[RMDB]
RNA sequence: GGGAACGACUCGAGUAGAGUCGAAAAAGUCUGCUGAUAAGAAGCCUGAGGAGUUGUCUGUAACUCUUGUGGAGGCAUACACAGAUGUGUUUGAUGACACACAGGUUGAGAUGAUUGAUGAGGUUACGACCUUCCACAUGUUCGCAUGUGGAAGGUCAAAAGAAACAACAACAACAAC
Reactivity to DMS in 0.01 (KOAc 150mM, MgCl2 10mM, bicine 150mM(pH8.5), 24C), signal-to-noise 1, nucleotides 027 to 126: a130g020u000c020u000g010c050u040g000a100u010a110a100g000a140a150g010c010c050u010g010a100g000g000a030g030u010u000g030u000c070u010g010u030a040a000c000u020c030u010u000g040u000g010g000a180g010g000c060a060u000a030c020a020c020a220g000a120u030g000u000g000u000u000u000g000a050u000g000a300c060a060c020a080c120a060g010g010u000u000g010a070g000a060u010g000a060u010u000g010a100u000g010a020g000g000u000u000a100c160
Structure probing data (DMS) for a 177-nucleotide construct. The RNA was probed in 150 mM KOAc, 10 mM MgCl2 and 150 mM bicine (pH 8.5) at 24 C. It was measured as part of the RMDB library OK2TST. For DMS, 1,049 sequencing reads were counted.